This 207-nucleotide RNA was probed chemically with 2A3. The data come from the RNA Mapping Database (RMDB), library OK3TST. The reactions ran in a buffer of 150 mM KOAc, 10 mM MgCl2 and 150 mM bicine (pH 8.5), at 24 C.

RNA sequence: GGGAACGACUCGAGUAGAGUCGAAAACAUCGGCAUUAAUGUUAUUGCUAUAAUAAUAUCAGUCAUUCAGUCACAUUUCUCAAGUGGAGCAGAAAACAACAGCAAACAUAUGCUGGGGAAAUAACAUGUCUCCACGUUGAAGAAUUUAAUUUUUAAAGUUUACAUGCUGAUUCGUCAGCAUGUAAACAAAAGAAACAACAACAACAAC
Reactivity to 2A3 in 0.01 (KOAc 150mM, MgCl2 10mM, bicine 150mM(pH8.5), 24C), signal-to-noise 1, nucleotides 027 to 156: c010a100u100c050g020g000c000a050u040u200a110a070u140g070u100u060a050u030u010g010c010u050a030u060a250a100u130a090a020u080a010u130c030a030g120u000c050a030u100u060c000a040g160u090c070a070c070a180u000u150u000c020u000c010a030a000g010u000g010g020a010g000c000a000g120a000a160a050a030c070a010a020c000a000g010c000a050a030a170c030a220u220a060u210g000c000u000g030g000g030g000a050a120a040u140a090a030c030a050u020g010u010c000u010c000c010a010c030g000u000u050g020a050a040g020a000a000u110u090u170a180a010u190u040u070u120u160a030a190a120